Notes:
Structure probing data (2A3 and DMS) for a 177-nucleotide construct. DMS (dimethyl sulfate) methylates the pairing face of unpaired adenines and cytosines. It was measured as part of the RMDB library OK1LIB. Conditions: 150 mM KOAc, 10 mM MgCl2 and 150 mM bicine (pH 8.5), 24 C. The DMS profile rests on 1,174 reads.
[RMDB]
RNA sequence: GGGAACGACUCGAGUAGAGUCGAAAAAUUGAUCAUGUCGAUAAAAAAAGUGAUACGUCUGCAAAUGAUCAAUACCAUGUAUCACAAUUAAAUGAUGCGUUAGAGAAGGCGAUUAAAGCUAUCGACGAAGGAAAGGUCGAUUCGUCGACCUUUCCUUAAAAGAAACAACAACAACAAC
Reactivity to 2A3 in 0.01 (KOAc 150mM, MgCl2 10mM, bicine 150mM(pH8.5), 24C), signal-to-noise 1, nucleotides 027 to 126: a000u000u000g000a000u000c000a000u020g000u100c020g060a000u230a000a250a000a000a000a000a000g000u000g120a000u020a030c000g070u020c150u100g010c050a000a000a300u100g100a000u080c000a050a050u070a000c000c000a010u100g000u000a070u000c000a120c140a010a170u300u240a120a020a020u050g090a000u120g000c000g140u120u100a000g000a000g090a190a000g020g060c000g000a020u110u190a030a090a000g000c010u000a000u000c000g020a000c000g020
Reactivity to DMS in 0.01 (KOAc 150mM, MgCl2 10mM, bicine 150mM(pH8.5), 24C), signal-to-noise 1, nucleotides 027 to 126: a030u010u000g000a000u000c000a030u020g000u010c120g000a060u040a000a000a010a100a090a120a060g010u000g000a080u040a070c000g000u000c090u070g010c270a030a030a090u000g020a000u000c060a090a040u000a300c000c070a070u000g000u000a000u000c000a030c050a120a120u040u070a010a030a140u050g030a000u000g070c000g080u040u000a190g000a190g010a130a070g040g010c030g000a040u000u040a040a070a300g020c050u000a060u000c000g000a000c120g070